Structure probing data (2A3) for a 207-nucleotide construct.
Reactivities are given for positions 27 through 156.
The data come from the RNA Mapping Database (RMDB), library ARCHII.
For 2A3, 841 sequencing reads were counted.
The RNA was probed in 150 mM KOAc, 10 mM MgCl2 and 150 mM bicine (pH 8.5) at 24 C.
RNA sequence: GGGAACGACUCGAGUAGAGUCGAAAAGUGGCGUGUGCCUGUAAUCCAGCUACUUGGAGGCUUGGGCUGUCGGAUCGCUUGAGUCCAGGAGUUCUGGGCUGCACUGAGCUAUGUCGAUCGGGUGUCCGCACUAAGUUCGGUAUCAAUAUGGUGUUCCGGUUUUAAAGUACUUCGGUACUUUAAAACCAAAAGAAACAACAACAACAAC
Reactivity to 2A3 in 0.01 (KOAc 150mM, MgCl2 10mM, bicine 150mM(pH8.5), 24C), signal-to-noise 1, nucleotides 027 to 156: g090u070g050g000c100g000u240g120u140g040c050c080u000g000u070a000a060u060c010c000a010g000c020u050a050c040u050u040g080g040a030g040g020c030u030u040g080g000g010c020u040g050u090c030g030g080a070u030c040g020c030u000u050g010a000g000u000c010c000a030g030g040a090g060u160u070c000u020g000g000g000c020u040g000c040a060c100u090g020a010g010c030u050a050u090g090u110c020g020a050u020c050g080g000g010u070g050u010c040c020g030c010a010c070u150a050a030g040u040u000c030g010g020u020a040u130c060a110a040u090a050u220g020g000u000g060u050u030c070c070